Notes: An RNA of 177 nucleotides, treated with DMS and 2A3 and read out base by base. For DMS, 8,945 sequencing reads were counted. Source: RMDB library OK2TST, as collected in RNAgym.
RNA sequence: GGGAACGACUCGAGUAGAGUCGAAAAUCCAAGAAGUGAAAAAAGUGGAAAUAGUCAGAAAAGUCGACGUAGUAGAAUGAGCAUUUCAACGAGAUCUUCUGGCGAUGAAUCAGCAUCUCGUCCUAGACGUAAAUACGUACUUCGGUACGUAUUUACGAAAAGAAACAACAACAACAAC
Reactivity to DMS in 0.01 (KOAc 150mM, MgCl2 10mM, bicine 150mM(pH8.5), 24C), signal-to-noise 8, nucleotides 027 to 126: u010c010c010a130a090g010a090a080g020u010g000a000a060a090a090a120a100g010u010g010g000a040a060a060u000a090g010u000c040a050g010a060a060a080a130g020u000c030g020a080c060g010u000a070g010u000a080g020a060a060u010g010a080g010c130a070u000u000u000c050a110a040c020g000a140g010a040u000c080u000u000c010u000g000g000c030g010a060u010g000a070a060u000c090a050g020c300a060u000c030u000c040g000u000c040c030u000a060g020a200
Reactivity to 2A3 in 0.01 (KOAc 150mM, MgCl2 10mM, bicine 150mM(pH8.5), 24C), signal-to-noise 5, nucleotides 027 to 126: u030c000c000a000a040g100a030a020g050u160g100a100a110a020a000a020a020g100u090g020g060a030a110a070u070a070g030u030c020a000g090a060a150a050a010g070u060c060g020a170c040g030u030a040g030u020a030g090a080a070u130g020a070g080c060a070u010u100u070c030a040a020c020g010a000g000a060u010c020u050u000c020u080g010g000c020g020a020u110g020a010a050u070c030a020g040c010a030u020c010u020c030g040u020c010c010u050a070g010a100